[RMDB]
RNA sequence: GGGAACGACUCGAGUAGAGUCGAAAACACCUGAGGGUGAGGCCAUCCUAUCCACUUCUGGUGCCGGACACCGGUACUACUGGGACGGUCGCACUGCGGCGCCGCUCGAUGCCGGAGGUCUGGAGACAAGGCCGAAUGGGUUCGCCCAUUCGGCCUUAAAAGAAACAACAACAACAAC
Reactivity to 2A3 in 0.01 (KOAc 150mM, MgCl2 10mM, bicine 150mM(pH8.5), 24C), signal-to-noise 1, nucleotides 027 to 126: c090a030c000c000u060g000a190g000g000g060u030g040a210g000g080c040c020a040u100c000c000u090a050u000c150c060a040c110u110u070c040u010g120g000u040g000c040c000g000g000a040c000a000c000c000g000g000u000a000c040u000a000c020u110g000g000g220a100c040g070g000u230c020g000c100a300c110u180g050c150g050g060c000g000c000c000g030c000u080c010g010a010u060g040c000c000g020g000a010g000g040u030c040u000g020g020a020g000a000c170
This 177-nucleotide RNA was probed chemically with 2A3. The reactions ran in a buffer of 150 mM KOAc, 10 mM MgCl2 and 150 mM bicine (pH 8.5), at 24 C. It was measured as part of the RMDB library RFM100.